[RMDB]
RNA sequence: GGGAACGACUCGAGUAGAGUCGAAAAGAGGAAAGUCCCGCCUCCAGAUCAAGGGAAGUCCCGCGAGGGACAAGGGUAGUACCCUUGGCAACUGCACAGAAAACUUACCCCUAAAUAUUCAAUGAGGUAAUGAGUGCUGAUUCGUCAGCACUCAUUAAAAAGAAACAACAACAACAAC
Reactivity to DMS in 0.01 (KOAc 150mM, MgCl2 10mM, bicine 150mM(pH8.5), 24C), signal-to-noise 3, nucleotides 027 to 126: g010a060g000g010a160a050a020g000u000c010c070c000g020c000c000u000c000c150a030g000a150u040c040a020a030g000g010g010a040a120g010u020c000c000c040g000c300g000a160g000g030g010a040c020a090a020g030g010g010u000a040g000u020a300c010c010c020u000u000g030g040c160a080a050c040u020g000c130a120c080a120g000a040a040a160a080c090u010u000a120c010c020c000c240u030a020a070a070u020a080u020u050c100a090a070u010g010a070g000g000
Reactivity to 2A3 in 0.01 (KOAc 150mM, MgCl2 10mM, bicine 150mM(pH8.5), 24C), signal-to-noise 3, nucleotides 027 to 126: g110a020g010g030a070a100a000g050u030c000c000c000g010c000c000u000c020c040a030g020a130u050c020a020a000g080g000g000a130a010g020u010c010c030c000g040c060g070a050g000g010g000a020c010a000a000g060g000g010u010a060g040u140a150c000c000c000u000u010g000g000c010a030a080c000u060g070c110a030c020a090g290a070a100a000a000c020u030u090a060c010c000c000c000u090a070a030a100u230a240u200u200c130a110a140u110g030a050g030g070